[RMDB]
RNA sequence: GGGAACGACUCGAGUAGAGUCGAAAAGAAAGAAAGAAAGCUGACCCUUCUGCUGACGGAUCUUGUGGAGCACCACAGUGCAGAAGGGGAGAGAAGCUUUAAUGCCGACCGUCUGGACAGCCUUGAAAAAACGGAUUCUUCUUCGGAAGAAUCCGAAGUCAUAUUUGACGUUCGCGUCAAAUAUGACAAAAGAAACAACAACAACAAC
Reactivity to 2A3 in 0.01 (KOAc 150mM, MgCl2 10mM, bicine 150mM(pH8.5), 24C), signal-to-noise 2, nucleotides 027 to 156: g060a060a040a000g060a060a050a030g110a010a060a040g000c010u070g130a080c000c000c000u000u000c000u010g040c030u070g040a040c040g020g050a130u130c030u110u070g040u020g020g020a040g130c080a160c060c000a000c020a030g050u030g020c000a010g000a010a010g000g000g010g000a010g000a000g000a010a000g000c000u050u020u060a090a040u090g000c000c000g030a060c020c000g020u040c030u030g030g010a020c020a030g000c000c030u080u100g060a050a000a000a030a080a000c000g000g000a000u000u000c000u020u000c000u010u050c060g080g000a000a000g000a000a000u010c000c000g000a000a000
Reactivity to DMS in 0.01 (KOAc 150mM, MgCl2 10mM, bicine 150mM(pH8.5), 24C), signal-to-noise 1, nucleotides 027 to 156: g040a280a080a130g040a160a110a120g000a100a030a040g070c020u000g020a070c010c020c000u000u010c000u010g000c040u000g010a190c090g000g000a150u000c050u010u000g010u040g010g020a150g010c250a110c000c020a010c030a060g010u000g000c000a020g010a040a010g000g000g000g000a030g010a200g000a130a030g000c020u000u000u010a060a130u000g010c000c070g000a070c060c010g000u030c110u020g030g010a140c010a210g020c030c010u000u010g000a010a090a050a090a120a200c000g010g000a030u000u000c000u000u010c000u000u000c300g050g000a020a010g000a060a000u000c010c020g000a010a010